An RNA of 177 nucleotides, treated with 2A3 and DMS and read out base by base. For 2A3 the reverse transcriptase was SuperScript II with manganese.
RNA sequence: GGGAACGACUCGAGUAGAGUCGAAAAAGUUUAAAAGGUAAGUACGUAGCUCAUCGCAUAACGCUGGUAAGCUCUCUUUUGGUAAAGAACGUAAUUCAUCUGGUGUAUUUGCCAAAGCCAGAAUUGGCGAUGGAAUGAACUUCGGUUCAUUCCAUCGAAAAGAAACAACAACAACAAC
Reactivity to 2A3 in 0.01 (KOAc 150mM, MgCl2 10mM, bicine 150mM(pH8.5), 24C), signal-to-noise 3, nucleotides 027 to 126: a000g100u160u110u110a180a190a020a000g150g050u060a050a110g070u030a040c080g050u020a000g010c000u010c000a030u060c040g020c060a020u090a180a070c110g010c060u060g010g060u060a070a050g040c000u000c000u030c010u130u040u070u130g100g000u130a030a070a060g000a110a000c030g030u080a050a130u160u110c060a080u020c050u030g060g030u040g030u040a100u070u080u120g040c000c000a000a020a040g020c000c000a010g000a030a130u080u070g030g000
Reactivity to DMS in 0.01 (KOAc 150mM, MgCl2 10mM, bicine 150mM(pH8.5), 24C), signal-to-noise 2, nucleotides 027 to 126: a140g000u000u010u040a010a050a060a050g000g030u000a050a060g010u010a040c030g050u010a060g000c000u000c000a040u000c040g000c030a090u010a110a090c210g000c040u000g010g000u000a080a060g000c040u000c110u000c040u010u010u000u000g010g000u060a010a020a050g010a070a060c040g000u000a060a140u020u020c150a090u010c030u020g010g000u020g020u000a120u020u020u010g000c040c050a010a050a110g010c000c010a040g000a060a090u010u020g000g000

For DMS the reverse transcriptase was MarathonRT. Values cover nucleotides 27 to 126.